[RMDB]
RNA sequence: GGGAACGACUCGAGUAGAGUCGAAAACGCUGGGUGCGUAACAAGCUUUUGACGCUCGUACUGAAGCGCGCACGGUACAGAGCGAUAAGCUUGGAGAAGCACCUGUGCUGAAGCGCGCACGGCAACCGAAAGGUGCGACGAUGGAAUUUCGAUUCCAACGUUCACCUUAUUUCGAUAAGGUGAACGUAAAAGAAACAACAACAACAAC
Reactivity to DMS in 0.01 (KOAc 150mM, MgCl2 10mM, bicine 150mM(pH8.5), 24C), signal-to-noise 1, nucleotides 027 to 156: c100g000c010u000g010g000g010u000g040c010g000u000a090a070c020a030a010g020c000u010u000u020u010g010a140c000g020c010u010c000g040u010a060c010u000g060a060a090g050c000g090c010g010c000a300c040g000g010u000a030c010a170g020a040g050c020g050a020u000a060a040g030c000u000u000g040g000a110g040a130a180g040c000a060c010c000u010g000u020g030c010u010g000a080a130g010c020g060c050g070c000a130c030g040g000c010a300a110c020c010g020a090a150a230g060g040u000g050c020g010a040c030g010a200u000g000g000a070a060u000u000u000c190g020a230u010u000c030c010a080
Reactivity to 2A3 in 0.01 (KOAc 150mM, MgCl2 10mM, bicine 150mM(pH8.5), 24C), signal-to-noise 4, nucleotides 027 to 156: c060g000c040u060g000g040g000u000g020c010g010u050a010a050c000a000a010g010c000u050u070u160u300g220a120c020g000c010u000c000g000u000a000c000u030g070a210a140g020c040g010c010g010c070a020c030g000g000u040a050c150a210g000a000g000c010g160a180u060a130a010g000c000u010u000g010g060a110g020a060a020g000c000a000c000c010u010g030u030g000c030u120g080a110a030g020c030g000c010g020c010a010c000g060g070c050a130a190c040c000g080a170a030a050g020g010u020g030c040g020a050c060g120a150u110g000g030a020a030u070u130u210c160g070a050u070u000c020c010a020
Chemical mapping of a 207-nucleotide RNA with DMS and 2A3. The RNA was probed in 150 mM KOAc, 10 mM MgCl2 and 150 mM bicine (pH 8.5) at 24 C. It was measured as part of the RMDB library RNAMAK.